The record gives the reactivity of an RNA of 177 nucleotides to DMS and 2A3. The 2A3 profile rests on 1,609 reads. It was measured as part of the RMDB library M2PK50. 2A3 adducts were read by reverse transcription with SuperScript II with manganese.

[RMDB]
RNA sequence: GGGAACGACUCGAGUAGAGUCGAAAAUUAAAGCCAUUCGUGGCUUUAAACUCUGGUGUCCCGAAAAGGCUCGUGGGCGAUCCCACGCGAACCAGUUUUCGAUUAAGGAUAAGUUCGCUUAUCCUAAGGGUCUUAUAGUAUUCGUACUAUAAGACCCAAAAGAAACAACAACAACAAC
Reactivity to DMS in 0.01 (KOAc 150mM, MgCl2 10mM, bicine 150mM(pH8.5), 24C), signal-to-noise 3, nucleotides 027 to 126: u000u000a010a010a010g010c000c010a010u000u000c190g020u010g010g000c000u000u000u000a000a030a100c200u000c050u000g010g020u000g010u000c020c010c000g010a040a060a120a140g000g000c050u000c000g040u000g000g000g040c270g000a110u010c030c000c000a040c010g020c090g000a080a080c010c020a080g010u010u000u000u000c030g000a130u000u010a130a050g000g010a010u000a000a010g000u000u000c190g010c000u000u000a000u000c000c000u010a040a080
Reactivity to 2A3 in 0.01 (KOAc 150mM, MgCl2 10mM, bicine 150mM(pH8.5), 24C), signal-to-noise 2, nucleotides 027 to 126: u050u000a000a000a020g000c010c000a000u040u040c280g050u000g010g030c000u010u020u000a000a000a000c070u020c010u060g050g020u040g030u080c030c000c000g030a080a140a010a010g040g010c020u010c080g020u020g000g040g060c120g140a230u300c000c000c010a010c030g020c020g010a020a050c000c010a020g000u010u010u060u230c140g030a120u160u130a110a000g010g000a010u000a000a000g010u000u100c130g040c090u020u000a000u030c000c000u010a000a050